[RMDB]
RNA sequence: GGGAACGACUCGAGUAGAGUCGAAAAUAACAAAAUUCACAACCUCCUCCUGUGGGGGAACAAUGUGUCUACUGCCAGUCUGAUUGAAUCCUUGUGAAGGGGUGAGGCAGUUCAGAUUUUGUGGCACCACCCCGUUACGAUUCGUCGUAACGGGGUGAAAAGAAACAACAACAACAAC
Reactivity to DMS in 0.01 (KOAc 150mM, MgCl2 10mM, bicine 150mM(pH8.5), 24C), signal-to-noise 2, nucleotides 027 to 126: u020a230a130c030a050a010a050a050u000u000c060a040c010a060a270c230c060u000c010c000u000c230c100u000g000u000g020g010g000g000g000a050a020c180a060a050u000g000u000g000u000c020u000a070c060u000g030c030c050a100g010u000c100u010g000a120u000u000g010a090a040u000c020c010u000u010g010u010g000a100a070g000g000g000g040u000g010a030g000g010c040a040g000u000u000c110a040g000a050u000u020u000u010g070u000g000g030c070a100c190
Reactivity to 2A3 in 0.01 (KOAc 150mM, MgCl2 10mM, bicine 150mM(pH8.5), 24C), signal-to-noise 1, nucleotides 027 to 126: u160a030a020c010a000a080a050a060u110u120c020a040c000a010a050c020c000u040c020c000u110c050c060u120g050u300g070g030g020g000g040a000a010c050a080a090u080g080u010g010u000c010u030a080c030u000g050c050c030a040g050u000c050u030g050a130u060u060g030a110a070u040c000c020u020u130g040u070g090a200a100g030g000g000g020u080g030a110g000g030c020a000g010u050u040c000a000g020a030u060u050u040u150g110u020g040g000c020a020c070
Conditions: 150 mM KOAc, 10 mM MgCl2 and 150 mM bicine (pH 8.5), 24 C. Chemical mapping of a 177-nucleotide RNA with DMS and 2A3. The DMS profile rests on 1,234 reads. The data come from the RNA Mapping Database (RMDB), library OK2TRN. For DMS the reverse transcriptase was MarathonRT.